[RMDB]
RNA sequence: GGGAACGACUCGAGUAGAGUCGAAAAUGUCGGGUUUUGUUCGCUGGCAGCAGUGGAGUCAUGAGCUCACCCAGACGCACCACAUUGGCUGACUGCCGGACCGGCAAGAACUCGCGGUAGCGCCAGAGCGCAAGCUAGAAUUCGUUCUAGCUUGCGCAAAAGAAACAACAACAACAAC
Reactivity to DMS in 0.01 (KOAc 150mM, MgCl2 10mM, bicine 150mM(pH8.5), 24C), signal-to-noise 1, nucleotides 027 to 126: u010g010u000c010g020g000g000u000u000u000u000g000u020u000c100g010c030u000g000g000c000a030g010c010a040g050u010g000g000a130g010u010c050a050u000g000a140g000c070u000c080a120c090c040c030a090g010a060c140g030c060a030c030c060a060c040a110u010u010g010g010c000u000g000a080c000u000g010c020c010g060g000a090c110c030g000g020c020a080a040g010a020a050c010u000c040g020c030g010g000u010a050g030c070g000c050c060a090g020a160
Reactivity to 2A3 in 0.01 (KOAc 150mM, MgCl2 10mM, bicine 150mM(pH8.5), 24C), signal-to-noise 1, nucleotides 027 to 126: u160g050u100c000g010g020g020u050u070u070u090g110u170u170c090g000c040u020g020g000c000a000g000c020a000g000u090g050g100a030g000u070c080a120u120g090a030g020c040u040c050a100c000c030c010a000g020a000c100g030c010a040c000c030a030c000a120u000u090g070g020c010u020g000a300c000u020g070c010c000g010g010a050c010c030g020g010c000a000a020g030a030a000c020u020c050g020c010g040g040u040a020g030c030g000c030c010a050g020a000
This 177-nucleotide RNA was probed chemically with DMS and 2A3. The reactions ran in a buffer of 150 mM KOAc, 10 mM MgCl2 and 150 mM bicine (pH 8.5), at 24 C. 2A3 adducts were read by reverse transcription with SuperScript II with manganese. Source: RMDB library OK2TST, as collected in RNAgym. The DMS profile rests on 1,290 reads.